[RMDB]
RNA sequence: GGGAACGACUCGAGUAGAGUCGAAAAUCAAAGAGCGUACAGCACACUCAGACUGUACGUCAGUCUGACACACACGUACGCUAGUCCAACGAGAGAGAGAGAGCGUUGGAACAAGUGUGUGAAAAAACAUUUUACUGGUGUUCGCACCAGUAAAAUGAAAAGAAACAACAACAACAAC
Reactivity to DMS in 0.01 (KOAc 150mM, MgCl2 10mM, bicine 150mM(pH8.5), 24C), signal-to-noise 3, nucleotides 027 to 126: u010c040a070a120a130g010a070g000c000g000u000a010c010a150g020c090a090c110a080c190u000c010a010g000a010c000u000g020u010a070c250g000u010c010a010g000u000c010u000g000a080c060a030c060a030c050a050c030g000u000a020c030g020c060u000a070g000u000c000c010a020a020c030g020a060g020a110g000a120g010a100g010a080g000a130g010c000g010u000u010g020g000a020a090c150a070a070g010u000g000u000g000u000g010a010a020a050a080a040a080
Reactivity to 2A3 in 0.01 (KOAc 150mM, MgCl2 10mM, bicine 150mM(pH8.5), 24C), signal-to-noise 5, nucleotides 027 to 126: u120c060a060a070a010g120a020g010c000g010u020a010c030a040g030c100a030c010a020c080u050c010a010g030a070c010u020g020u140a110c090g130u010c020a000g000u000c010u010g040a010c000a000c010a000c000a000c090g030u080a020c010g000c010u010a010g030u000c010c000a000a010c010g010a030g000a010g000a000g000a000g010a000g010a100g050c000g010u000u010g010g020a010a040c040a070a080g030u030g000u000g010u040g030a100a040a000a000a010a010